[RMDB]
RNA sequence: GGGAACGACUCGAGUAGAGUCGAAAAGAGGGUCACACACCUGCAGGAGGUCACAGAGCCAGGGGAUGGCUGGCCCCACAGACCCGUCUCCCAGGUGGCCAGCCUGCAGCCUGUGCCGUCCUGCUGAUCGGCUUUAUCUGUUCGCAGAUAAAGCCGAAAAAGAAACAACAACAACAAC
Reactivity to DMS in 0.01 (KOAc 150mM, MgCl2 10mM, bicine 150mM(pH8.5), 24C), signal-to-noise 1, nucleotides 027 to 126: g010a230g030g000g030u020c000a150c220a150c230a190c230c080u010g010c000a010g000g000a270g000g020u010c010a000c030a020g020a150g000c000c120a050g030g010g000g010a120u000g020g000c010u000g010g000c000c010c000c010a060c200a100g020a030c030c000c030g010u000c130u000c000c000c040a240g000g000u000g020g000c010c000a010g000c000c010u000g020c050a220g030c060c000u010g020u000g000c020c000g000u000c010c000u000g000c010u000g000a130